[RMDB]
RNA sequence: GGGAACGACUCGAGUAGAGUCGAAAAGAUAUGGAGCUUUGUUGGGAGAAGGACAUCGGAAACGAUGUACUUCGAAGAACAACAUGGCUCCUAAGUCAAAAUCGUUCUAGGUUCGCCUAGAACGAAACCAACAAGAUGACUUCGGUCAUCUUGUUGGAAAAGAAACAACAACAACAAC
Reactivity to DMS in 0.01 (KOAc 150mM, MgCl2 10mM, bicine 150mM(pH8.5), 24C), signal-to-noise 2, nucleotides 027 to 126: g000a010u000a100u000g000g000a040g000c000u010u000u000g010u000u000g020g040g040a220g000a030a030g000g000a010c000a000u020c000g010g000a000a030a050c010g040a010u000g020u000a000c010u000u000c000g090a100a180g010a100a220c020a000a000c000a010u000g000g020c000u000c010c020u000a000a040g000u000c020a130a070a170a090u000c000g030u000u000c020u000a000g000g010u000u010c300g020c000c000u000a000g000a010a000c000g010a000a060a100
Reactivity to 2A3 in 0.01 (KOAc 150mM, MgCl2 10mM, bicine 150mM(pH8.5), 24C), signal-to-noise 1, nucleotides 027 to 126: g000a000u030a020u100g000g000a010g000c000u000u030u010g020u000u010g070g070g050a300g020a060a000g000g020a020c000a000u000c000g000g000a000a000a000c000g000a000u000g010u010a020c000u020u010c010g060a080a080g040a000a010c000a000a000c000a000u000g020g000c000u030c010c000u020a000a000g000u000c020a050a010a000a300u030c010g000u000u000c000u030a000g060g030u050u060c300g090c110c010u000a020g020a010a000c000g000a000a000a010
Structure probing data (DMS and 2A3) for a 177-nucleotide construct. For 2A3 the reverse transcriptase was SuperScript II with manganese. The 2A3 profile rests on 3,728 reads. The reactions ran in a buffer of 150 mM KOAc, 10 mM MgCl2 and 150 mM bicine (pH 8.5), at 24 C.